[RMDB]
RNA sequence: GGGAACGACUCGAGUAGAGUCGAAAAAACGGAGAAAGGAGCGGGCCUCCCGAUCCGAGUGGUCCACGGCGUAUCAAGUUUGGAGUCAUCCGGCCGAAGGGUUGAGAUGACCCACAGUCGGGUGAUCGAUAUAUCCUAUCUUCGGAUAGGAUAUAUCAAAAGAAACAACAACAACAAC
Reactivity to 2A3 in 0.01 (KOAc 150mM, MgCl2 10mM, bicine 150mM(pH8.5), 24C), signal-to-noise 3, nucleotides 027 to 126: a010a000c060g000g000a060g040a030a060a020g010g020a010g010c070g010g210g050c020c020u000c030c000c000g020a010u000c010c000g010a030g030u130g000g030u000c000c000a030c010g030g000c010g030u150a050u210c050a080a060g010u020u170u130g090g000a100g020u020c000a000u000c010c010g000g000c010c000g050a090a120g060g000g000u020u030g060a130g000a150u190g060a030c000c020c000a030c010a010g000u000c000g010g000g040u050g020a010u030c020
Reactivity to DMS in 0.01 (KOAc 150mM, MgCl2 10mM, bicine 150mM(pH8.5), 24C), signal-to-noise 4, nucleotides 027 to 126: a070a090c030g000g000a040g000a120a150a090g010g000a030g020c060g010g010g020c160c010u000c010c000c020g000a240u010c010c010g010a080g020u000g000g000u010c010c020a100c070g000g010c070g000u010a060u000c100a100a120g020u000u000u010g020g010a150g010u000c000a010u000c000c010g000g010c000c020g000a130a130g020g010g000u000u000g000a180g010a130u010g000a010c010c000c000a090c060a050g000u000c000g000g010g030u000g000a030u000c100
An RNA of 177 nucleotides, treated with 2A3 and DMS and read out base by base. The reactions ran in a buffer of 150 mM KOAc, 10 mM MgCl2 and 150 mM bicine (pH 8.5), at 24 C. For DMS, 5,848 sequencing reads were counted.